[RMDB]
The record gives the reactivity of an RNA of 177 nucleotides to 2A3 and DMS. Reactivities are given for positions 27 through 126. DMS adducts were read by reverse transcription with MarathonRT. The reactions ran in a buffer of 150 mM KOAc, 10 mM MgCl2 and 150 mM bicine (pH 8.5), at 24 C.
RNA sequence: GGGAACGACUCGAGUAGAGUCGAAAAAGCACGCCAUACGUGGCGUGCAAAAGUGAUGUAGCAGGGACGUACUGAAGCUAAUGUGGAAAGAGUAUAAAGACUGACACACCACGAUACGUCGUGGUGAGUGCAUGGAGAACUUCGGUUCUCCAUGCACAAAAGAAACAACAACAACAAC
Reactivity to 2A3 in 0.01 (KOAc 150mM, MgCl2 10mM, bicine 150mM(pH8.5), 24C), signal-to-noise 4, nucleotides 027 to 126: a000g010c010a000c000g020c000c000a010u040a060c300g080u030g000g000c000g000u000g010c000a000a000a000a040g030u030g030a080u050g000u140a010g020c030a030g010g060g020a020c020g020u080a040c050u080g040a050a000g020c030u090a110a100u190g010u030g080g040a050a050a040g100a050g090u110a030u160a160a090a010g060a050c050u020g030a010c030a000c000a000c110c000a010c000g000a010u030a020c170g060u010c000g000u000g000g000u000g020a030
Reactivity to DMS in 0.01 (KOAc 150mM, MgCl2 10mM, bicine 150mM(pH8.5), 24C), signal-to-noise 2, nucleotides 027 to 126: a140g000c000a000c010g040c000c000a030u010a100c130g080u000g020g020c000g000u020g000c000a000a000a070a110g040u020g040a040u010g010u010a090g030c050a060g000g000g010a120c070g000u000a080c040u000g010a050a070g000c030u010a080a060u020g050u000g000g000a060a090a040g040a020g000u060a030u040a060a070a060g000a100c070u000g000a120c070a180c000a020c010c000a000c010g000a060u030a130c180g000u000c000g020u040g030g000u000g010a020